The record gives the reactivity of an RNA of 177 nucleotides to DMS and 2A3.
Conditions: 150 mM KOAc, 10 mM MgCl2 and 150 mM bicine (pH 8.5), 24 C.
It was measured as part of the RMDB library M2PK50.
For 2A3, 13,385 sequencing reads were counted.
Reactivities are given for positions 27 through 126.
DMS adducts were read by reverse transcription with MarathonRT.
RNA sequence: GGGAACGACUCGAGUAGAGUCGAAAAACGACACAAUUCGUUGUGUCGUAAUGGAAAAGGCUAGGACCGGCCAGACAAAGGUCCGAAAAGAUGGAAAGAUCACACGCCACGAAUUCGUUCGUGGCAAGAUCCAGUACCUAUUCGUAGGUACUGGAUCAAAAGAAACAACAACAACAAC
Reactivity to DMS in 0.01 (KOAc 150mM, MgCl2 10mM, bicine 150mM(pH8.5), 24C), signal-to-noise 5, nucleotides 027 to 126: a030c010g000a010c000a010c000a010a020u000u010c200g020u010u010g010u010g000u000c000g010u000a020a070u010g010g000a110a090a140a090g010g010c000u000a120g010g000a000c000c010g010g010c010c010a130g000a120c250a030a060a120g000g010u000c000c000g000a040a040a060a050g010a070u000g010g000a090a090a090g000a070u000c070a100c210a100c190g000c000c000a010c000g010a010a020u000u010c180g010u000u010c000g020u000g000g000c020a010a010
Reactivity to 2A3 in 0.01 (KOAc 150mM, MgCl2 10mM, bicine 150mM(pH8.5), 24C), signal-to-noise 6, nucleotides 027 to 126: a000c000g010a000c000a000c000a020a030u090u070c160g040u120u010g000u000g000u000c000g000u010a010a080u100g020g030a040a070a100a200g020g000c020u050a050g040g000a000c000c000g010g000c010c020a030g010a020c120a020a120a010g000g000u000c000c000g000a020a020a010a020g070a020u110g060g190a140a070a050g070a040u070c020a030c000a020c180g000c000c000a000c000g010a000a010u080u080c170g070u070u000c000g000u030g000g000c000a000a000